[RMDB]
RNA sequence: GGGAACGACUCGAGUAGAGUCGAAAAUGCCGGCAUCAUCAUCCCCGAGGGCCUCCAGGCCAACGGCGCAGCGAUCAAGGGCGGGACCUGGUUCGAGACGGGCGCGGAGAUGCUGAACGGCGGCACGUGCGUAUACUCUCUUCGGAGAGUAUACGCAAAAAGAAACAACAACAACAAC
Reactivity to 2A3 in 0.01 (KOAc 150mM, MgCl2 10mM, bicine 150mM(pH8.5), 24C), signal-to-noise 1, nucleotides 027 to 126: u070g010c030c010g090g110c020a060u000c000a000u000c000a000u010c000c000c000c000g030a060g050g180g000c000c000u070c040c010a000g000g000c000c020a070a080c040g090g000c070g010c020a080g150c010g120a030u240c080a020a090g060g000g000c110g050g030g040a080c020c010u030g000g000u090u150c080g030a050g020a090c110g020g000g040c010g000c000g000g000a020g000a000u000g000c010u000g000a190a030c050g130g010c000g000g000c010a040c050g100
Reactivity to DMS in 0.01 (KOAc 150mM, MgCl2 10mM, bicine 150mM(pH8.5), 24C), signal-to-noise 2, nucleotides 027 to 126: u010g000c010c000g010g000c010a090u000c010a000u000c020a050u000c010c020c010c030g010a070g010g000g010c010c000u000c080c090a080g000g010c020c020a040a070c120g020g010c050g020c060a070g000c080g020a040u000c120a160a140g010g000g040c030g010g020g000a110c010c020u000g020g000u010u000c100g000a100g050a080c170g010g000g010c040g020c010g010g000a040g000a030u010g010c100u000g010a010a080c120g030g020c020g010g010c040a040c170g020

Structure probing data (2A3 and DMS) for a 177-nucleotide construct. The 2A3 profile rests on 1,378 reads. It was measured as part of the RMDB library OK2TRN. For DMS the reverse transcriptase was MarathonRT. For 2A3 the reverse transcriptase was SuperScript II with manganese.